[RMDB]
RNA sequence: GGGAACGACUCGAGUAGAGUCGAAAAUCACUGCCUUUUACCUUCUUUUAGGUUAGUUGCAAUGUUGACACAGACAUUUAGAAGAUGGUAUGUCUGAAGGGACUUAUGUUUAGGCACCCACUUGCAAAUUCUGAUUGGUAUUCGUACCAAUCAGAAUAAAAGAAACAACAACAACAAC
Reactivity to 2A3 in 0.01 (KOAc 150mM, MgCl2 10mM, bicine 150mM(pH8.5), 24C), signal-to-noise 3, nucleotides 027 to 126: u100c010a000c150u060g010c010c000u030u030u050u060a040c000c000u020u040c010u050u000u030u030a050g060g020u030u070a080g060u080u080g040c030a140a250u200g080u190u130g200a030c030a000c010a050g050a030c010a040u040u080u060a050g010a040a010g040a020u070g000g050u060a040u060g030u020c010u050g110a080a060g080g000g010a020c000u140u150a090u240g180u050u150u060a000g000g010c000a040c000c010c000a030c040u050u170g020c020a030a080
Reactivity to DMS in 0.01 (KOAc 150mM, MgCl2 10mM, bicine 150mM(pH8.5), 24C), signal-to-noise 7, nucleotides 027 to 126: u000c140a110c180u000g010c010c010u000u000u000u000a050c020c010u010u000c080u000u000u000u000a040g010g010u010u000a090g010u010u000g010c050a140a120u010g010u010u000g000a120c140a070c080a120g010a070c100a020u000u010u000a040g010a050a050g010a040u010g010g020u000a020u010g010u000c010u000g010a120a070g000g010g000a080c030u010u010a060u010g010u000u000u010a020g020g010c010a070c030c010c010a080c160u010u000g010c160a080a100
The record gives the reactivity of an RNA of 177 nucleotides to 2A3 and DMS. Source: RMDB library OK2TRN, as collected in RNAgym. 2A3 is a SHAPE reagent: it acylates the 2'-hydroxyl of flexible nucleotides of all four kinds. The reactions ran in a buffer of 150 mM KOAc, 10 mM MgCl2 and 150 mM bicine (pH 8.5), at 24 C.